[RMDB]
RNA sequence: GGGAACGACUCGAGUAGAGUCGAAAAGUUUGACUGUUCGCAGUCAAACAAAGGCUAAGGUAUAAAAAUCUGCUAGUUACGUAAGCCAAAAACGAGCAGAAAAAACGGCGUACUUCGGUACGCCGAACGACUUACGAAAGUUCGCUUUCGUAAGUCGAAAAGAAACAACAACAACAAC
Reactivity to 2A3 in 0.01 (KOAc 150mM, MgCl2 10mM, bicine 150mM(pH8.5), 24C), signal-to-noise 2, nucleotides 027 to 126: g000u000u000u000g000a000c010u000g030u030u080c180g010c080a010g000u000c000a000a020a000c010a010a010a000g050g000c060u080a050a110g140g100u210a150u120a230a180a030a010a080u050c010u000g020c000u010a010g060u070u030a040c040g030u040a080a080g110c030c020a180a130a000a000a000c020g000a000g000c020a010g100a040a120a010a000a000a020c000g000g000c000g000u010a000c000u030u060c200g080g000u010a000c010g000c010c000g010a000a000
Reactivity to DMS in 0.01 (KOAc 150mM, MgCl2 10mM, bicine 150mM(pH8.5), 24C), signal-to-noise 1, nucleotides 027 to 126: g020u000u000u000g010a010c000u000g010u000u030c230g090c020a000g010u000c020a000a000a000c000a020a100a100g010g010c060u010a140a110g000g020u000a070u000a010a070a030a120a100u010c010u000g020c000u000a060g000u000u010a090c120g010u000a080a120g010c040c040a050a080a080a080a060c050g030a000g020c020a000g000a000a060a100a080a100a100c020g000g000c000g050u010a010c020u000u010c140g020g010u040a000c030g000c030c000g000a000a030